[RMDB]
RNA sequence: GGGAACGACUCGAGUAGAGUCGAAAACAGUCCGGACUGACGAUUCAUCGCUACGGUGAUCCCGAAGCUUAUUCAGCAGCUCCUUGGAUUUUUCAUCAAGCUGGGUAGGGAUGGAUACGUCAACGUGUGCGUGUACUGUCUUCGGACAGUACACGCAAAAAGAAACAACAACAACAAC
Reactivity to 2A3 in 0.01 (KOAc 150mM, MgCl2 10mM, bicine 150mM(pH8.5), 24C), signal-to-noise 1, nucleotides 027 to 126: c040a040g180u030c080c050g010g080a080c110u030g010a010c030g020a010u030u050c010a000u000c030g140c220u060a000c040g090g000u060g040a010u000c030c010c020g000a020a000g000c030u120u010a110u260u300c070a060g000c030a000g050c110u070c010c030u050u130g030g020a020u110u000u020u120u140c040a070u030c020a110a040g060c040u150g180g050g030u010a010g000g070g030a000u000g000g000a030u170a280c010g000u000c010a010a020c010g140u130g040
Reactivity to DMS in 0.01 (KOAc 150mM, MgCl2 10mM, bicine 150mM(pH8.5), 24C), signal-to-noise 1, nucleotides 027 to 126: c100a170g020u000c060c000g020g020a150c090u030g000a030c040g020a080u000u000c010a020u000c010g000c030u000a010c000g000g020u000g000a080u000c050c000c240g010a080a040g030c080u000u000a100u010u020c260a220g020c180a050g000c010u000c030c060u000u020g010g000a160u020u000u000u020u030c080a030u000c100a070a060g020c080u000g030g040g020u030a000g010g010g000a020u000g000g000a060u010a060c010g000u000c000a010a050c090g010u000g010
Source: RMDB library OK2TRN, as collected in RNAgym.
This 177-nucleotide RNA was probed chemically with 2A3 and DMS.
2A3 is a SHAPE reagent: it acylates the 2'-hydroxyl of flexible nucleotides of all four kinds.
2A3 adducts were read by reverse transcription with SuperScript II with manganese.
DMS adducts were read by reverse transcription with MarathonRT.
High DMS reactivity at an A or C suggests that its Watson-Crick edge is free.